About this RNA
This 207-nucleotide RNA was probed chemically with 2A3. The 2A3 profile rests on 905 reads.
RNA sequence: GGGAACGACUCGAGUAGAGUCGAAAACCUCACUACAUUUUACUGUUCCUAAAGAAUUUGUGACAGGUACAGUAAAACGUAUUGCAAGCUUUAUCAGUUCCUAUAAACAGGUAAAUAACAAUAUAUGAAAAGCAAAGACUGUUCGCAGUCUUUGCAACCUGUUUGUAUCCUUCGGGAUACAAACAGGAAAAGAAACAACAACAACAAC
Reactivity to 2A3 in 0.01 (KOAc 150mM, MgCl2 10mM, bicine 150mM(pH8.5), 24C), signal-to-noise 2, nucleotides 027 to 156: c000c000u030c020a000c020u020a010c030a020u000u000u000u000a000c000u000g000u030u050c000c010u080a110a140a060g180a280a280u170u290u210g060u100g080a060c070a040g000g000u010a000c000a000g000u000a000a000a000a000c000g000u020a000u020u050g020c050a060a040g040c050u140u140u040a080u170c010a020g050u060u050c010c010u140a120u200a140a140a020c040a000g050g000u030a090a150a110u110a060a040c040a090a020u090a030u080a040u210g050a070a080a030a050g000c000a000a000a000g010a000c000u010g000u030u030c150g010c100a000g000u000c000u000u000u000g000c000a000a000
2A3 adducts were read by reverse transcription with SuperScript II with manganese.